[RMDB]
RNA sequence: GGGAACGACUCGAGUAGAGUCGAAAAAGCGAGUGAACACGCCAGGAUCUGAGGCGUGAAACUGAUCCAAAACACUCGCAAAAGAAAAAGUGAGCCAGACAUACGAUACGUAUGUCUGGCUCACGAAGGAGUCAUCAUGAUUCGUCAUGAUGACUCCAAAAGAAACAACAACAACAAC
Reactivity to 2A3 in 0.01 (KOAc 150mM, MgCl2 10mM, bicine 150mM(pH8.5), 24C), signal-to-noise 1, nucleotides 027 to 126: a010g010c000g000a000g020u010g010a080a000c000a000c000g020c040c000a080g000g120a210u110c070u280g110a020g040g000c000g000u000g000a000a000a000c020u040g110a110u000c020c000a030a020a030a030c010a000c000u000c000g000c000a020a030a030a030g020a000a160a000a000a000g000u000g000a000g000c000c000a000g010a000c000a000u000a000c030g300a260u140a300c060g020u090a000u000g000u020c000u000g000g000c010u020c020a000c030g000a000a000